[RMDB]
RNA sequence: GGGAACGACUCGAGUAGAGUCGAAAAAAGCUACGUUAGAACUGAGUCAGGCUGUUCUAAAAGAGUUCUACUGACUCGCAUCGUUAGAGUUUGAGUUAUGUAUUGUAACGGUGUUAAAUAAACACAUAACCUAUAGUUGUAGACAAAUGGGUUAGCACCUAUGGACAGUCUUCGGACUGUCCAUAGGAAAAGAAACAACAACAACAAC
Reactivity to DMS in 0.01 (KOAc 150mM, MgCl2 10mM, bicine 150mM(pH8.5), 24C), signal-to-noise 1, nucleotides 027 to 156: a060a070g060c040u000a020c070g000u000u000a060g010a040a060c050u020g010a120g000u000c040a050g000g000c070u000g010u000u000c030u020a040a060a120a090g010a100g000u000u010c030u010a120c010u000g000a030c000u000c020g000c040a020u000c050g000u000u000a050g010a110g000u000u000u000g020a080g000u000u000a030u020g050u000a020u000u000g000u000a010a080c010g010g040u010g030u010u000a090a050a110u010a030a060a040c110a020c010a050u000a020a010c010c040u000a110u000a130g030u010u000g000u000a080g000a090c050a000a080a110u010g010g010g000u000u010a080g010c110a130
Reactivity to 2A3 in 0.01 (KOAc 150mM, MgCl2 10mM, bicine 150mM(pH8.5), 24C), signal-to-noise 1, nucleotides 027 to 156: a000a000g100c060u080a040c020g060u040u020a040g040a080a050c060u050g000a020g020u010c000a000g000g080c070u090g000u030u000c010u100a070a080a090a030g090a060g020u130u140c060u080a080c010u010g000a000c000u000c000g000c000a010u000c020g030u000u020a040g000a030g070u010u040u050g070a070g000u020u000a010u070g030u020a020u020u090g120u000a010a000c010g000g000u030g000u020u030a050a040a050u140a050a100a000c040a000c000a040u000a010a010c010c020u030a040u050a230g030u000u020g020u060a020g020a120c050a020a140a060u110g020g000g050u040u030a000g030c030a040